An RNA of 177 nucleotides, treated with DMS and read out base by base.
RNA sequence: GGGAACGACUCGAGUAGAGUCGAAAAGAUAUGGACCUGGCUCCGAUAAGAAGCACUCGGAAACGAGUGGCUUCUUUUGACGGAGCCAGGUCCUAAGUCAAAAGACGAGUUGUUCGCAACUCGUCAACCCUGUAUUGUUCUUCGGAACAAUACAGGGAAAAGAAACAACAACAACAAC
Reactivity to DMS in 0.01 (KOAc 150mM, MgCl2 10mM, bicine 150mM(pH8.5), 24C), signal-to-noise 2, nucleotides 027 to 126: g010a010u010a140u000g000g000a020c010c010u000g000g000c000u000c000c000g020a170u010a030a010g010a020a010g000c000a020c010u010c010g010g000a020a040a060c000g010a010g020u000g010g020c010u000u000c000u000u000u030u010g020a190c020g000g000a020g020c000c000a000g000g010u000c000c000u000a000a050g010u010c020a120a120a150a180g000a010c000g000a000g000u000u000g010u000u010c240g010c000a010a000c000u000c000g010u000c000a010a090
Overview: Source: RMDB library TTRDEL, as collected in RNAgym. Conditions: 150 mM KOAc, 10 mM MgCl2 and 150 mM bicine (pH 8.5), 24 C.